This 177-nucleotide RNA was probed chemically with DMS. Source: RMDB library OK2TRN, as collected in RNAgym. For DMS, 564 sequencing reads were counted. The RNA was probed in 150 mM KOAc, 10 mM MgCl2 and 150 mM bicine (pH 8.5) at 24 C.

[RMDB]
RNA sequence: GGGAACGACUCGAGUAGAGUCGAAAAUUGAUUUUAAAGUGGGUGCUACCCAAGAAGACGAUAGAAUCCAUCAAGCUCUUUUGCAAGCGGGUUUUGAGGUCGUCUUGUUAUUUGUUAAAAAGGAUAACUCCAGUCACUAUUUCGAUAGUGACUGGAGAAAAGAAACAACAACAACAAC
Reactivity to DMS in 0.01 (KOAc 150mM, MgCl2 10mM, bicine 150mM(pH8.5), 24C), signal-to-noise 1, nucleotides 027 to 126: u000u010g010a120u010u010u010u000a070a050a150g020u000g020g000g000u000g010c100u010a190c000c010c020a090a080g010a040a020g010a010c000g000a030u000a130g000a100a030u000c010c050a120u000c120a010a220g000c040u000c170u010u000u070u070g070c130a030a180g040c300g010g030g000u000u000u000u030g050a060g000g010u020c000g000u010c020u000u000g000u040u000a070u010u000u000g020u010u010a040a070a140a000a120g000g020a000u000a010a140